[RMDB]
Chemical mapping of a 177-nucleotide RNA with DMS and 2A3.
It was measured as part of the RMDB library OK2TST.
Values cover nucleotides 27 to 126.
Conditions: 150 mM KOAc, 10 mM MgCl2 and 150 mM bicine (pH 8.5), 24 C.
RNA sequence: GGGAACGACUCGAGUAGAGUCGAAAAAUUCAGAUUAAAACAAGGUAGGGUAUCACAUCUGCACUGAGAACAUGGCUGGACCUCCUUGAUGGCUCUGAGCCUGGAUCUCCACUGACACAUGCUGUUAUCGAGCAUGAUAUUUCGAUAUCAUGCUCGAAAAAGAAACAACAACAACAAC
Reactivity to DMS in 0.01 (KOAc 150mM, MgCl2 10mM, bicine 150mM(pH8.5), 24C), signal-to-noise 3, nucleotides 027 to 126: a090u000u010c070a030g000a110u000u000a110a080a070a200c090a030a020g000g020u000a070g000g020g010u020a080u000c050a050c110a050u010c060u000g010c080a090c140u000g010a100g000a050a090c120a040u000g010g000c070u000g010g000a060c050c020u000c040c090u000u010g000a080u020g000g010c180u000c030u000g010a070g010c070c050u010g020g020a080u020c040u010c030c050a070c050u000g020a040c100a060c070a090u010g030c060u000g010u000u000a090
Reactivity to 2A3 in 0.01 (KOAc 150mM, MgCl2 10mM, bicine 150mM(pH8.5), 24C), signal-to-noise 2, nucleotides 027 to 126: a000u110u070c030a000g060a090u160u220a070a120a070a040c020a070a010g020g040u040a020g040g110g050u160a070u130c050a020c020a170u020c010u060g040c050a070c090u050g070a000g020a160a000c020a050u090g050g000c040u000g000g050a090c010c010u050c000c010u080u080g030a050u060g040g000c020u010c000u080g090a030g050c020c010u030g070g040a140u010c030u020c030c000a050c040u040g000a010c020a010c010a120u110g010c020u040g000u200u070a110